[RMDB]
RNA sequence: GGGAACGACUCGAGUAGAGUCGAAAAAGUACCUAAUUCGUGAUAAGAAAGUCAAUGCAGUGGUUAACAUGCGUUCAAAUGACGUGGUCUUCGGAUUCCGUAAUGAUUAUGCAUGGCAAAAAUACGUACUAGAUAAAUUAGUAUCUGAUUUGAAUGCCUUAAUGCCGUCUUUCGAGACGGCAUUAAGAAAAGAAACAACAACAACAAC
Reactivity to 2A3 in 0.01 (KOAc 150mM, MgCl2 10mM, bicine 150mM(pH8.5), 24C), signal-to-noise 2, nucleotides 027 to 156: a000g070u100a090c010c000u070a080a150u110u150c020g040u060g080a070u150a160a050g110a150a010a020g050u060c070a090a060u150g030c000a000g030u070g040g030u050u080a100a000c050a060u060g000c000g030u090u030c050a060a080a140u070g070a010c000g000u090g000g000u010c020u040u050c270g140g020a100u300u050c060c000g050u030a130a040u100g090a000u090u070a000u160g000c020a000u010g020g040c060a100a090a000a040a040u020a050c040g000u000a000c010u000a000g100a180u110a160a070a050u140u030a000g040u010a000u050c090u100g100a060u080u000u040g070a170a070u040g040c000
Reactivity to DMS in 0.01 (KOAc 150mM, MgCl2 10mM, bicine 150mM(pH8.5), 24C), signal-to-noise 1, nucleotides 027 to 156: a100g010u020a220c050c030u000a070a200u000u000c060g040u000g040a250u010a090a080g000a040a040a170g030u000c070a000a070u010g000c090a100g050u020g020g070u000u000a060a110c040a070u000g010c000g020u010u000c130a010a010a080u030g000a030c030g020u010g010g000u000c010u000u030c300g010g010a050u000u010c090c000g010u010a040a080u000g010a210u000u000a040u000g020c040a010u010g010g000c070a010a080a040a010a140u010a060c070g010u040a040c040u000a110g000a240u000a050a050a120u000u000a050g010u000a010u000c040u010g000a090u000u010u010g050a120a130u000g000c060
An RNA of 207 nucleotides, treated with 2A3 and DMS and read out base by base.
It was measured as part of the RMDB library OK3TST.
The DMS profile rests on 1,602 reads.
Conditions: 150 mM KOAc, 10 mM MgCl2 and 150 mM bicine (pH 8.5), 24 C.
For DMS the reverse transcriptase was MarathonRT.
For 2A3 the reverse transcriptase was SuperScript II with manganese.